[RMDB]
RNA sequence: GGGAACGACUCGAGUAGAGUCGAAAAAUUCAGGUUAUGAAUAUUUGGACAUUAAGAAUUGAUGUAUUCUUAGUGCAUCAUUUAAGAAGGCAGUGACAUAAUUUUGUCCAUUACUCAUAGUAUUACAUAGUCGUCUUAAUUUCGAUUAAGACGACUAAAAAGAAACAACAACAACAAC
Reactivity to DMS in 0.01 (KOAc 150mM, MgCl2 10mM, bicine 150mM(pH8.5), 24C), signal-to-noise 2, nucleotides 027 to 126: a180u000u000c050a070g030g020u000u000a020u000g000a020a010u000a010u010u000u010g000g000a010c000a010u010u000a020a060g000a180a140u010u000g010a080u010g010u000a060u000u010c080u000u000a050g010u010g010c160a100u020c080a030u010u010u010a040a040g000a070a040g000g020c020a030g000u000g010a090c090a040u020a180a160u010u000u000u000g000u000c010c000a000u000u000a010c030u000c000a000u000a020g000u000a060u010u010a070c160a160
Reactivity to 2A3 in 0.01 (KOAc 150mM, MgCl2 10mM, bicine 150mM(pH8.5), 24C), signal-to-noise 2, nucleotides 027 to 126: a000u160u100c060a010g080g000u040u000a020u010g000a010a010u010a060u070u050u040g000g000a000c000a000u060u070a080a050g110a170a050u070u060g030a010u020g050u020a050u100u030c060u120u070a070g070u050g030c020a070u110c000a010u110u120u060a070a050g040a020a030g070g000c000a050g090u040g120a050c020a080u160a060a130u130u060u080u040g000u000c010c000a000u000u040a010c000u010c010a010u010a030g020u030a060u170u210a140c120a100
Source: RMDB library OK2TRN, as collected in RNAgym. This 177-nucleotide RNA was probed chemically with DMS and 2A3. For DMS the reverse transcriptase was MarathonRT. The reactions ran in a buffer of 150 mM KOAc, 10 mM MgCl2 and 150 mM bicine (pH 8.5), at 24 C. The DMS profile rests on 2,337 reads. For 2A3, 1,318 sequencing reads were counted.